This 177-nucleotide RNA was probed chemically with 2A3 and DMS. For 2A3, 3,857 sequencing reads were counted. Conditions: 150 mM KOAc, 10 mM MgCl2 and 150 mM bicine (pH 8.5), 24 C. 2A3 adducts were read by reverse transcription with SuperScript II with manganese. The data come from the RNA Mapping Database (RMDB), library OK2TRN. For DMS the reverse transcriptase was MarathonRT.
RNA sequence: GGGAACGACUCGAGUAGAGUCGAAAAGCAAUAGGCUGUGCCACGUAGCCUAGGUGUGUAGUAGGCUCUGUCGUGUAGGUUUGUGUAGGUACACUCUAUGAUGUUUGCAUGAAGAUGACAUUGCCUAGAAACAAUCCUGUUUCGACAGGAUUGUUUCAAAAGAAACAACAACAACAAC
Reactivity to 2A3 in 0.01 (KOAc 150mM, MgCl2 10mM, bicine 150mM(pH8.5), 24C), signal-to-noise 3, nucleotides 027 to 126: g040c030a010a040u010a030g000g000c010u020g020u080g150c070c020a150c110g060u050a010g000c000c000u020a080g190g110u040g010u020g030u020a080g070u000a010g020g000c000u000c000u020g050u020c030g030u030g070u110a130g130g080u020u030u040g080u020g020u040a020g070g050u040a000c030a000c030u020c050u070a140u150g070a040u050g080u050u060u080g040c040a040u030g050a060a020g060a060u080g010a020c030a040u020u050g040c010c000u020a080
Reactivity to DMS in 0.01 (KOAc 150mM, MgCl2 10mM, bicine 150mM(pH8.5), 24C), signal-to-noise 4, nucleotides 027 to 126: g000c040a060a090u000a010g010g000c020u000g010u000g020c110c130a040c130g020u000a060g010c010c010u000a010g010g020u010g030u000g000u010a100g030u000a060g000g010c000u000c030u010g010u010c020g010u010g030u010a060g020g010u000u010u000g020u010g000u000a030g010g010u000a070c060a060c060u010c170u010a090u010g000a050u000g000u000u010u010g000c040a070u000g010a050a050g000a090u000g010a050c040a050u000u000g020c000c020u000a080